RNA sequence: GGGAACGACUCGAGUAGAGUCGAAAAAAUUUAUCCCCUUCUUCCCUGCAGUGAGGUCACAAUCCUGUGUUUGUGACAUAGCAGUCAGUUGCCAUGGAGAUGAUUGCUUUAUCACCAACUCCUCUUUCGAAUAAAUAUGGUUCGCCAUAUUUAUUCGAAAAGAAACAACAACAACAAC
Reactivity to 2A3 in 0.01 (KOAc 150mM, MgCl2 10mM, bicine 150mM(pH8.5), 24C), signal-to-noise 6, nucleotides 027 to 126: a000a000u260u250u150a120u070c010c000c000c000u040u020c000u020u020c020c000c010u020g000c010a060g020u030g100a060g050g090u080c040a030c030a070a050u030c020c070u130g020u060g000u170u030u010g010u000g000a010c000a030u040a010g000c000a000g010u010c010a050g020u120u170g120c070c040a110u200g070g060a140g020a100u040g010a020u010u030g010c000u060u080u050a110u040c010a000c030c000a020a050c010u040c010c000u010c010u000u000u000
Reactivity to DMS in 0.01 (KOAc 150mM, MgCl2 10mM, bicine 150mM(pH8.5), 24C), signal-to-noise 1, nucleotides 027 to 126: a080a070u000u000u020a120u030c000c000c000c060u000u000c060u000u000c010c010c000u010g030c060a050g000u010g000a080g040g000u000c010a070c100a050a080u010c060c090u030g020u010g020u000u000u020g010u010g000a010c020a050u000a080g010c010a010g000u000c010a050g000u000u060g030c040c050a160u010g000g000a050g010a170u000g000a030u000u000g000c000u000u000u000a070u020c010a030c020c100a060a080c020u000c090c060u000c090u000u000u000

The record gives the reactivity of an RNA of 177 nucleotides to 2A3 and DMS. DMS adducts were read by reverse transcription with MarathonRT. The reactions ran in a buffer of 150 mM KOAc, 10 mM MgCl2 and 150 mM bicine (pH 8.5), at 24 C. For 2A3 the reverse transcriptase was SuperScript II with manganese.